[RMDB]
RNA sequence: GGGAACGACUCGAGUAGAGUCGAAAAUUUAUUUCCGCUAACGAUAUAGGGCAAGUCAUAAGCGUGAUGUUGCAAGAUAUUGUCAAGCCGAGCGAGGCUUUACAAAACGAUGUAGUCGCUUUAGGCAUACAACUGGGUUAUUCGUAACCCAGUUGUAAAAAGAAACAACAACAACAAC
Reactivity to DMS in 0.01 (KOAc 150mM, MgCl2 10mM, bicine 150mM(pH8.5), 24C), signal-to-noise 5, nucleotides 027 to 126: u010u010u010a120u020u010u000c000c010g020c160u010a100a060c030g010a020u000a030u000a040g040g010g010c030a040a090g010u000c010a020u000a090a170g030c260g000u020g010a020u010g010u000u000g020c000a030a050g020a030u000a030u000u000g000u000c100a070a070g030c000c020g000a090g020c080g000a070g000g010c080u000u010u000a040c060a040a050a070a150c290g000a070u000g000u000a070g010u010c020g020c010u000u000u000a140g020g020c070a250
Reactivity to 2A3 in 0.01 (KOAc 150mM, MgCl2 10mM, bicine 150mM(pH8.5), 24C), signal-to-noise 2, nucleotides 027 to 126: u040u090u040a100u020u030u000c030c000g000c100u040a040a000c000g040a010u030a000u040a150g050g000g000c020a040a030g000u020c020a050u050a120a090g070c030g140u030g030a030u130g080u170u000g000c010a020a000g000a000u060a030u070u020g000u010c030a020a000g000c010c000g040a010g110c050g040a060g110g000c020u040u000u020a050c060a010a070a040a040c070g030a030u090g010u040a030g120u030c020g000c000u010u040u140a060g060g000c000a020